Description: Chemical mapping of a 177-nucleotide RNA with DMS and 2A3. For 2A3 the reverse transcriptase was SuperScript II with manganese. 2A3 is a SHAPE reagent: it acylates the 2'-hydroxyl of flexible nucleotides of all four kinds. Conditions: 150 mM KOAc, 10 mM MgCl2 and 150 mM bicine (pH 8.5), 24 C. The 2A3 profile rests on 5,426 reads.
[RMDB]
RNA sequence: GGGAACGACUCGAGUAGAGUCGAAAAAGCACUGAGCCUCAGAAGGCACCCACUUGAACUGAAGCCCUUGUCUCAUGGAGCUGAAGUACUUGUCUUGGGACCACAACCACCAACCUGGGAGAGUGCACGACAUAGCCUAGUUCGCUAGGCUAUGUCGAAAAGAAACAACAACAACAAC
Reactivity to DMS in 0.01 (KOAc 150mM, MgCl2 10mM, bicine 150mM(pH8.5), 24C), signal-to-noise 3, nucleotides 027 to 126: a070g000c000a000c000u010g000a140g010c020c000u030c010a040g030a170a210g040g040c170a130c000c000c010a140c030u000u000g000a090a010c020u000g010a280a050g030c000c020c000u000u010g000u000c150u010c070a040u020g000g020a140g000c000u000g000a140a000g010u000a010c060u000u000g010u000c130u040u020g000g000g010a260c010c030a140c230a090a070c110c020a070c070c070a050a070c110c010u020g020g000g000a100g010a010g010u010g010c020a180
Reactivity to 2A3 in 0.01 (KOAc 150mM, MgCl2 10mM, bicine 150mM(pH8.5), 24C), signal-to-noise 6, nucleotides 027 to 126: a010g020c020a020c040u050g010a030g070c000c000u040c020a030g040a090a130g050g000c070a150c020c010c000a020c000u010u020g030a050a000c000u020g000a010a000g000c010c020c000u100u140g130u220c060u080c160a060u100g010g000a100g030c000u010g010a010a000g010u040a070c010u010u050g070u080c090u080u070g020g000g030a020c030c020a090c050a100a110c000c020a040c030c020a070a040c020c010u010g000g000g010a040g010a000g010u010g010c000a020